[RMDB]
RNA sequence: GGGAACGACUCGAGUAGAGUCGAAAAUGAAAUCCCGUAAUCCUGGACGGACCACCGGUGGCGAAAGCGCCUCAGGAAGACGGAUCCGACGGUGAGGGACGAAAGCUCGGGUCACGAACCGGAUUAGCAUGAUAAGAACCUUCGGGUUCUUAUCAUGAAAAGAAACAACAACAACAAC
Reactivity to 2A3 in 0.01 (KOAc 150mM, MgCl2 10mM, bicine 150mM(pH8.5), 24C), signal-to-noise 2, nucleotides 027 to 126: u160g010a030a010a050u010c010c000c010g010u070a000a050u030c000c000u070g030g080a090c010g000g000a000c000c000a010c040c000g070g000u010g000g000c030g070a270a120a060g290c060g030c040c000u040c000a020g060g040a060a020g170a040c100g010g070a270u010c000c020g000a010c030g040g030u090g020a060g000g010g000a010c010g000a030a030a010g000c010u000c020g010g000g010u000c000a010c130g030a050a040c010c000g020g010a030u080u060a050g090
Reactivity to DMS in 0.01 (KOAc 150mM, MgCl2 10mM, bicine 150mM(pH8.5), 24C), signal-to-noise 2, nucleotides 027 to 126: u000g000a210a100a140u000c010c000c010g000u000a130a130u010c010c010u000g000g020a140c020g000g000a060c000c030a220c030c000g010g010u000g000g000c020g000a240a150a190g020c030g010c010c000u000c020a020g020g010a070a070g010a060c200g000g010a060u000c020c000g030a150c050g000g000u010g000a090g010g000g000a080c030g000a080a090a030g000c020u010c010g000g000g000u000c010a000c020g020a300a200c010c020g000g010a220u000u030a110g020